[RMDB]
RNA sequence: GGGAACGACUCGAGUAGAGUCGAAAAAGGCCUCCGCGGACCUGCAGAGAAAAGAAGAAGGGCCCAGAGGGGAAUGAGCCUCGUCGUCGACGAAGGGGUGCAUUCCGAAGAGCUGGCCUGAGCGUCGCUAUAUACUAUACUUCGGUAUAGUAUAUAGAAAAGAAACAACAACAACAAC
Reactivity to 2A3 in 0.01 (KOAc 150mM, MgCl2 10mM, bicine 150mM(pH8.5), 24C), signal-to-noise 2, nucleotides 027 to 126: a000g060g020c000c010u020c050c040g050c050g030g050a140c020c020u050g000c070a020g030a010g040a150a140a030a020g060a060a010g030a010a040g080g010g000c110c210c000a010g050a040g040g220g010g020a020a000u030g000a010g000c000c010u010c010g020u010c000g030u050c110g040a300c050g010a050a030g000g000g020g000u020g020c000a010u000u000c010c000g010a090a020g040a020g030c020u020g010g020c000c000u020g000a050g080c040g060u070c020g010
Reactivity to DMS in 0.01 (KOAc 150mM, MgCl2 10mM, bicine 150mM(pH8.5), 24C), signal-to-noise 5, nucleotides 027 to 126: a070g000g010c040c020u010c060c060g020c120g010g010a060c040c030u000g010c070a100g010a130g000a070a050a060a080g010a090a080g000a110a200g010g000g010c090c020c040a050g010a090g010g000g000g000a020a000u000g000a180g010c000c000u000c000g010u000c030g010u010c190g010a100c040g010a060a040g000g010g000g010u010g000c000a010u010u000c000c000g010a090a100g000a120g000c040u000g010g000c010c000u010g000a070g010c060g020u000c060g000
Source: RMDB library VIROID, as collected in RNAgym. This 177-nucleotide RNA was probed chemically with 2A3 and DMS. Reactivities are given for positions 27 through 126.